[RMDB]
RNA sequence: GGGAACGACUCGAGUAGAGUCGAAAAACUGACGGUACGCCGUCAGAACGGUAGAAAAGAUGGUUUGAAAAGCACGCCUUCUACCAAUAUAGUAAAUAAAUAGGCGGAGCGGUCAUACGUGACCGCAAAAACAUAUUCAGCUUCGGCUGAAUAUGAAGGCAUUACAUUGGUUCGCCAAUGUAAUGCCAAAAGAAACAACAACAACAAC
Reactivity to 2A3 in 0.01 (KOAc 150mM, MgCl2 10mM, bicine 150mM(pH8.5), 24C), signal-to-noise 1, nucleotides 027 to 156: a000c000u000g000a000c000g000g020u080a020c130g070c020c000g000u000c000a010g000a010a000c030g000g000u040a000g020a010a050a000a000g130a100u110g060g100u080u250u230g060a080a130a000a010g060c000a000c010g020c000c000u000u010c000u010a000c000c000a020a000u190a030u040a030g050u040a000a000a060u070a010a040a050u080a040g010g010c000g050g000a010g000c020g000g020u000c010a030u090a130c210g040u030g010a000c000c010g050c000a010a010a010a010a010c000a000u000a000u000u000c000a000g000c020u000u150c120g050g000c030u000g000a000a000u000a000u000g010a010a010